[RMDB]
RNA sequence: GGGAACGACUCGAGUAGAGUCGAAAACAGCAUCCAGCCGGGGAAGAAACCAGCCAGCGCCUGAGACACUUUGCGAAAGAAGGUAAAACCGGUGUAGACCGUUCCUUCCGAACGCACGCCGGUGCGCCCUCGAUAGUCGGUUCGCCGACUAUCGAGGAAAAGAAACAACAACAACAAC
Reactivity to DMS in 0.01 (KOAc 150mM, MgCl2 10mM, bicine 150mM(pH8.5), 24C), signal-to-noise 2, nucleotides 027 to 126: c170a140g100c130a130u000c030c040a290g000c010c010g000g000g000g020a030a010g000a010a140a040c190c000a120g000c050c010a060g040c030g010c020c000u010g000a080g020a070c180a040c070u000u000u000g000c130g020a130a100a100g020a070a090g000g040u000a080a040a270a060c050c000g000g000u000g000u030a110g050a050c300c040g000u020u000c000c110u010u030c150c040g000a000a050c010g000c020a060c020g000c000c010g000g000u000g000c200g040c020
Reactivity to 2A3 in 0.01 (KOAc 150mM, MgCl2 10mM, bicine 150mM(pH8.5), 24C), signal-to-noise 2, nucleotides 027 to 126: c000a000g050c000a080u050c020c030a000g050c000c030g040g020g030g000a140a000g040a030a090a000c000c010a000g040c020c010a030g000c050g020c010c000u090g000a060g020a040c010a020c090u000u080u040g000c060g020a040a060a020g140a000a000g130g040u170a060a070a070a070c030c000g000g020u020g000u030a050g050a040c030c050g000u000u020c000c000u160u090c010c030g030a030a040c030g000c000a040c020g050c000c000g030g050u010g020c070g040c000
This 177-nucleotide RNA was probed chemically with DMS and 2A3.
Conditions: 150 mM KOAc, 10 mM MgCl2 and 150 mM bicine (pH 8.5), 24 C.
2A3 is a SHAPE reagent: it acylates the 2'-hydroxyl of flexible nucleotides of all four kinds.
DMS adducts were read by reverse transcription with MarathonRT.
It was measured as part of the RMDB library OK1LIB.